The record gives the reactivity of an RNA of 177 nucleotides to 2A3 and DMS. The RNA was probed in 150 mM KOAc, 10 mM MgCl2 and 150 mM bicine (pH 8.5) at 24 C. Values cover nucleotides 27 to 126. 2A3 adducts were read by reverse transcription with SuperScript II with manganese. Reactivities are rounded to 0.1 and cut off at 0 and 3.

[RMDB]
RNA sequence: GGGAACGACUCGAGUAGAGUCGAAAAAGAUAUGGACAAAGUUGAGCCUGUUUCACUCCGUUGAUCUAGCUCGGAAACGAGCUAGGGAGGAGUUCUUCAACAGGCAAUGAUGCUUUGUCCUAAGUCAUCUAUGCUUAGUCUUCGGACUAAGCAUAGAAAAAGAAACAACAACAACAAC
Reactivity to 2A3 in 0.01 (KOAc 150mM, MgCl2 10mM, bicine 150mM(pH8.5), 24C), signal-to-noise 1, nucleotides 027 to 126: a000g070a030u070a050u200g000g000a000c000a020a010a010g010u020u030g010a020g040c000c010u010g010u000u090u140c020a010c000u000c000c010g160u180u020g020a010u020c000u000a000g000c010u000c010g000g040a100a090a010c020g000a000g010c000u000a000g030g010g010a000g000g000a000g000u040u000c030u040u020c020a000a010c000a000g000g000c010a000a040u030g000a010u070g020c010u000u020u010g010u020c010c000u000a000a000g000u020c020a030
Reactivity to DMS in 0.01 (KOAc 150mM, MgCl2 10mM, bicine 150mM(pH8.5), 24C), signal-to-noise 3, nucleotides 027 to 126: a080g000a040u000a300u010g010g000a000c000a000a000a010g020u010u010g000a100g000c000c000u010g000u000u000u000c280a020c010u000c000c010g030u010u030g000a030u000c000u000a000g000c000u000c000g000g000a110a090a240c000g010a010g020c010u000a000g010g020g010a020g010g010a020g000u000u000c060u010u010c220a020a020c010a000g000g010c000a070a050u020g010a100u010g000c010u010u000u000g000u000c000c010u000a010a080g000u000c050a200